The record gives the reactivity of an RNA of 177 nucleotides to DMS and 2A3.
The reactions ran in a buffer of 150 mM KOAc, 10 mM MgCl2 and 150 mM bicine (pH 8.5), at 24 C.

RNA sequence: GGGAACGACUCGAGUAGAGUCGAAAAGCUAUAGCCAUUAUUCAUUAUGUAGCAGGAGACCUAAAAUAAAUGAGUAACUUCUCUGGAUUUACGAAAGGAACCGAUAUCGCAGACUUAGAUGCGGUGGGGCACCAUACUAAUUCGUUAGUAUGGUGCCAAAAGAAACAACAACAACAAC
Reactivity to DMS in 0.01 (KOAc 150mM, MgCl2 10mM, bicine 150mM(pH8.5), 24C), signal-to-noise 2, nucleotides 027 to 126: g010c020u000a070u000a090g010c130c080a130u010u000a020u000u000c050a030u010u000a040u000g020u000a020g000c020a120g010g010a100g000a120c040c010u010a040a020a080a080u020a060a060a060u010g000a080g020u000a060a090c210u000u000c020u000c080u020g000g000a130u000u030u000a050c090g000a030a100a120g020g000a060a060c110c040g010a070u000a020u000c030g020c030a010g000a160c220u020u000a070g000a120u000g010c000g030g000u000g020g000
Reactivity to 2A3 in 0.01 (KOAc 150mM, MgCl2 10mM, bicine 150mM(pH8.5), 24C), signal-to-noise 2, nucleotides 027 to 126: g000c030u000a030u120a100g040c010c040a050u100u090a030u110u040c010a000u000u140a070u120g090u040a010g030c010a000g030g130a030g030a050c020c030u060a050a150a000a030u200a010a120a030u060g010a010g060u010a020a100c000u080u060c050u000c030u070g160g000a150u090u080u090a090c060g010a100a070a070g070g020a040a050c000c010g100a090u000a000u180c030g000c000a000g100a150c090u240u200a020g010a210u050g000c000g000g000u040g070g000

It was measured as part of the RMDB library OK2TRN. The DMS profile rests on 1,195 reads.